[RMDB]
RNA sequence: GGGAACGACUCGAGUAGAGUCGAAAAGUCCACAGUAAGCCAUCAGACGUAGCUGAGCGGUGCAUAUAGUGUGGACAACACUACGGCAUUUCGACGGGUUGAUGGGGGACCCAGAUGUGCCCUCAUAGGAGCGCUAAUUAUUCGUAAUUAGCGCUCCAAAAGAAACAACAACAACAAC
Reactivity to 2A3 in 0.01 (KOAc 150mM, MgCl2 10mM, bicine 150mM(pH8.5), 24C), signal-to-noise 1, nucleotides 027 to 126: g000u050c010c000a020c000a030g100u090a080a010g000c000c000a010u010c010a000g060a140c130g110u080a050g120c010u000g010a050g000c160g020g000u090g090c110a010u190a040u020a130g100u030g000u030g010g060a010c040a000a000c080a000c030u110a050c040g000g000c060a100u050u010u080c050g070a130c120g000g000g000u040u060g120a280u140g100g010g000g060g010a000c000c000c010a010g040a030u070g030u030g050c020c000c000u020c040a070u110a070
Reactivity to DMS in 0.01 (KOAc 150mM, MgCl2 10mM, bicine 150mM(pH8.5), 24C), signal-to-noise 2, nucleotides 027 to 126: g010u000c000c010a010c050a020g030u000a080a220g000c000c010a110u000c020a000g000a200c130g010u000a070g000c050u000g000a040g010c080g040g000u000g000c140a140u070a140u000a060g010u000g020u000g000g010a030c050a050a020c120a110c110u000a040c140g000g010c070a070u000u000u000c050g020a110c140g000g040g000u000u010g010a060u020g010g000g030g000g000a030c020c000c010a140g020a050u000g000u000g000c000c000c040u000c030a070u000a090